[RMDB]
RNA sequence: GGGAACGACUCGAGUAGAGUCGAAAAACACGAACCCUGUGCAAUGGAGUGAGCACAGCAACAGUAUGUCACUUUCAUUGUUUCCUUCGCAAGUAAAUGGUCGUUCGUCGGAGGCAUCUAAUAGUCACUACUCAUAAUGAUUCGUCAUUAUGAGUAGAAAAGAAACAACAACAACAAC
Reactivity to 2A3 in 0.01 (KOAc 150mM, MgCl2 10mM, bicine 150mM(pH8.5), 24C), signal-to-noise 9, nucleotides 027 to 126: a000c070a000c030g030a050a060c010c010c020u050g030u030g030c020a020a040u040g020g010a020g020u030g010a050g050c040a010c020a040g060c030a040a180c020a060g120u130a070u100g070u030c010a010c010u050u210u220c020a020u000u040g020u040u080u050c010c000u050u080c040g010c070a080a050g030u170a100a130a140u170g060g000u030c030g020u050u050c020g060u020c010g030g010a020g030g000c010a020u020c040u140a140a150u110a170g060u060c020a010
Reactivity to DMS in 0.01 (KOAc 150mM, MgCl2 10mM, bicine 150mM(pH8.5), 24C), signal-to-noise 9, nucleotides 027 to 126: a080c110a090c090g010a070a120c040c050c020u000g020u000g000c020a030a030u000g000g000a030g000u000g010a090g020c060a140c030a050g010c090a080a090c200a110g010u000a050u000g010u000c020a020c010u000u000u010c030a030u000u000g000u000u000u000c020c030u000u000c070g010c130a070a090g010u000a040a070a090u010g010g010u000c060g010u000u000c030g010u000c050g010g010a120g000g010c150a050u000c060u010a050a090u000a090g010u000c120a210